[RMDB]
RNA sequence: GGGAACGACUCGAGUAGAGUCGAAAAUAAACAGUUAGCACAAGCAGGUUUAACAUUACCUGAUUAUUACAUUUAUGAUAGCUGUGGUGGUUUUGAUGUGCAUUGUCCUGAAGGCAUCAUGGUUUCACAGUAUGACCUGUCGGUUGAUAGUAAUAUAAACGACGAUAAGUUUCGACUUAUCGUCGUUAAAAGAAACAACAACAACAAC
Reactivity to 2A3 in 0.01 (KOAc 150mM, MgCl2 10mM, bicine 150mM(pH8.5), 24C), signal-to-noise 1, nucleotides 027 to 156: u070a020a110a020c020a030g030u110u110a010g060c080a070c010a200a050g030c030a030g000g000u020u080u090a160a000c110a100u190u100a070c030c020u010g020a050u000u040a200u050u150a010c000a010u110u110u210a040u130g000a000u040a050g000c000u000g000u000g050g000u040g070g070u140u020u060u010g050a050u050g040u000g140c130a130u060u120g030u130c000c050u030g040a040a010g010g010c000a000u000c010a010u020g040g050u060u080u060c070a090c000a130g050u130a030u100g040a000c000c000u000g110u000c050g080g030u030u030g000a020u000a110g030u000a000a030u120a000u030a070
Reactivity to DMS in 0.01 (KOAc 150mM, MgCl2 10mM, bicine 150mM(pH8.5), 24C), signal-to-noise 1, nucleotides 027 to 156: u000a050a090a130c030a060g060u000u000a100g000c030a120c100a090a090g040c000a000g030g010u000u010u000a060a100c190a110u010u010a060c040c000u000g010a040u000u000a140u000u010a190c040a030u000u010u000a020u000g010a060u000a090g040c020u020g000u000g010g010u000g000g000u000u000u010u030g020a110u000g000u000g010c020a210u010u000g000u000c030c020u000g020a080a130g010g010c050a040u000c060a050u000g000g030u000u050u000c020a160c040a070g000u000a240u030g000a020c030c020u030g040u000c020g000g050u000u010g010a110u000a080g020u000a030a070u000a090u010a110